This 177-nucleotide RNA was probed chemically with DMS and 2A3. It was measured as part of the RMDB library OK2TST. The 2A3 profile rests on 3,306 reads. DMS adducts were read by reverse transcription with MarathonRT. The RNA was probed in 150 mM KOAc, 10 mM MgCl2 and 150 mM bicine (pH 8.5) at 24 C.
[RMDB]
RNA sequence: GGGAACGACUCGAGUAGAGUCGAAAAUGCAGGUCCAGGGUGGUCGUCGUCUCGAUGCAUGGCUUGCUCUGCGCAUCGGUCCAAAGCACGUCCUGAAUCGGUUCGGCCAGAACGGAAUUCAGCGACGUCAUGCCCUGCAUUUCGAUGCAGGGCAUGAAAAAGAAACAACAACAACAAC
Reactivity to DMS in 0.01 (KOAc 150mM, MgCl2 10mM, bicine 150mM(pH8.5), 24C), signal-to-noise 5, nucleotides 027 to 126: u010g010c060a050g000g010u010c080c050a090g000g000g040u020g010g020u000c030g010u010c060g000u000c040u010c090g010a060u000g000c050a070u000g010g010c040u000u000g020c090u010c020u010g020c110g000c040a070u010c030g030g000u000c030c030a100a080a120g020c190a080c000g010u000c010c000u000g010a020a010u000c010g000g010u000u000c010g010g000c260c250a130g000a010a000c010g010g000a080a060u000u000c000a010g000c180g010a000c010g010
Reactivity to 2A3 in 0.01 (KOAc 150mM, MgCl2 10mM, bicine 150mM(pH8.5), 24C), signal-to-noise 2, nucleotides 027 to 126: u090g000c020a000g020g020u000c020c010a020g080g000g010u050g010g030u040c010g020u000c020g030u000c040u040c100g050a050u060g000c060a030u030g030g010c030u040u100g020c020u020c020u110g010c010g000c000a020u050c050g000g000u010c020c040a100a030a020g110c080a030c020g010u000c000c000u020g000a010a010u010c050g060g040u040u020c070g070g110c140c030a010g010a000a010c030g090g030a050a070u020u010c010a020g000c000g050a000c000g020